[RMDB]
RNA sequence: GGGAACGACUCGAGUAGAGUCGAAAACCUACUCAAUACGUCCUCGUCGUACAGAACGGUAACAUGUUUUCCGAACAUCCGCGCUUGGGUAUACGAGUAUACACCUUACCCAGCCCUCGCCAACGGGAGUGCAUCCACGAGUUCGCUCGUGGAUGAACCCAUGUUACUACUUCGGUAGUAACAUGGGAAAAGAAACAACAACAACAAC
Reactivity to DMS in 0.01 (KOAc 150mM, MgCl2 10mM, bicine 150mM(pH8.5), 24C), signal-to-noise 2, nucleotides 027 to 156: c040c010u000a060c030u010c000a120a150u000a060c020g040u000c020c000u000c000g060u010c110g000u020a100c050a070g020a080a150c030g010g000u000a080a090c160a130u000g020u000u000u010u000c040c040g000a100a140c030a090u010c000c020g010c030g020c040u010u050g000g010g040u000a030u010a060c080g010a120g000u000a140u000a120c140a090c110c070u000u010a070c020c000c000a220g000c020c020c020u000c100g040c010c030a150a060c060g030g000g010a100g060u000g030c000a030u000c000c000a010c000g000a040g000u000u000c300g030c000u010c000g060u000g000g000a000u000g000a030a090
Reactivity to 2A3 in 0.01 (KOAc 150mM, MgCl2 10mM, bicine 150mM(pH8.5), 24C), signal-to-noise 6, nucleotides 027 to 156: c000c000u020a040c040u060c070a050a120u070a130c030g060u050c000c010u030c010g070u030c020g030u070a080c030a090g080a170a040c020g030g020u070a100a040c050a160u130g060u050u040u080u060c030c030g020a040a020c030a090u060c040c030g040c010g010c080u100u060g010g000g010u050a070u020a090c070g020a030g090u020a020u060a050c080a080c010c030u050u080a040c000c000c010a010g000c000c000c000u030c020g040c010c020a060a060c040g020g020g020a060g070u090g030c000a000u000c000c000a000c000g000a000g020u070u060c180g060c060u000c000g000u000g000g000a000u000g000a000a000
Annotation
This 207-nucleotide RNA was probed chemically with DMS and 2A3. The reactions ran in a buffer of 150 mM KOAc, 10 mM MgCl2 and 150 mM bicine (pH 8.5), at 24 C. It was measured as part of the RMDB library M2RFPK. 2A3 adducts were read by reverse transcription with SuperScript II with manganese.